RNA sequence: GGGAACGACUCGAGUAGAGUCGAAAACUGGGGCUUAGGACCCCACUCCCGCGAGACAGGAGUAAUCCUAAACAGGGUUUUCACCCUUCCUUUAGUUUCCUUCCUCUCCUGGAGAGGUCUUCUGCCCGUAUGAAUACAUGUUCGCAUGUAUUCAUACAAAAGAAACAACAACAACAAC
Reactivity to 2A3 in 0.01 (KOAc 150mM, MgCl2 10mM, bicine 150mM(pH8.5), 24C), signal-to-noise 6, nucleotides 027 to 126: c010u020g000g000g020g000c010u010u030a000g010g020a010c010c000c040c020a050c000u000c010c000c000g010c190g010a010g000a020c280a090g000g000a010g010u030a020a030u070c020c000u010a010a010a030c300a040g050g000g010u100u130u290u300c130a030c000c000c000u000u020c010c000u010u010u010a010g000u010u030u010c010c000u020u070c000c000u010c000u000c000c010u010g010g000a010g000a010g000g010u010c000u040u010c000u030g000c000c000c010
Reactivity to DMS in 0.01 (KOAc 150mM, MgCl2 10mM, bicine 150mM(pH8.5), 24C), signal-to-noise 5, nucleotides 027 to 126: c050u000g000g010g010g010c010u000u000a030g000g000a020c010c010c040c250a030c010u000c000c000c030g010c180g010a020g000a030c220a020g000g010a030g010u000a030a010u000c200c000u000a010a000a020c190a010g000g000g000u000u000u010u000c240a060c000c000c000u000u010c040c020u000u000u000a010g010u000u010u000c010c010u000u000c060c050u000c000u000c000c020u000g000g000a020g000a100g000g000u000c010u000u000c050u000g000c000c000c020